[RMDB]
Structure probing data (DMS and 2A3) for a 170-nucleotide construct. For 2A3, 4,848 sequencing reads were counted. For DMS, 11,493 sequencing reads were counted. Source: RMDB library 15KLIB, as collected in RNAgym. DMS adducts were read by reverse transcription with MarathonRT.
RNA sequence: GGGAACGACUCGAGUAGAGUCGAAAAUCCUCUUCUUCUUCCCUGCUGAGGUUCUUCCCUCCGGCGGCCAGUUGCUUCUUCUUGUUCUCGAGGGCCUUCCUUCGUCGGUGAUCCCGCCUCUCCUCGUUAAGCGAGUCGUUCGCGACUCGCAAAAGAAACAACAACAACAAC
Reactivity to DMS in 0.01 (KOAc 150mM, MgCl2 10mM, bicine 150mM(pH8.5), 24C), signal-to-noise 2, nucleotides 027 to 129: u000c030c010u000c080u060u010c030u020u010c040u070u010c030c000c000u060g050c050u030g040a100g020g050u030u000c080u020u020c000c010c020u030c060c020g010g060c050g060g000c000c080a100g000u030u040g030c040u020u000c040u000u040c060u020u010g030u000u030c020u010c000g030a280g000g010g070c080c040u020u010c010c040u000u010c000g000u010c060g020g030u020g040a120u050c040c020c040g030c060c030u030c050u010c000c000u030c030g010u050u060a030a070
Reactivity to 2A3 in 0.01 (KOAc 150mM, MgCl2 10mM, bicine 150mM(pH8.5), 24C), signal-to-noise 2, nucleotides 027 to 129: u060c020c000u070c120u020u020c000u000u000c020u010u060c000c000c000u000g000c010u020g040a030g020g000u050u000c030u010u020c010c090c000u000c000c000g000g000c010g130g000c030c000a050g020u060u090g050c030u010u000c000u030u000c020u040u090g040u010u000c010u000c070g010a050g020g000g000c000c010u010u010c020c010u030u040c000g130u000c010g040g030u080g050a080u000c030c000c010g000c000c000u000c000u020c000c020u060c010g060u080u080a060a000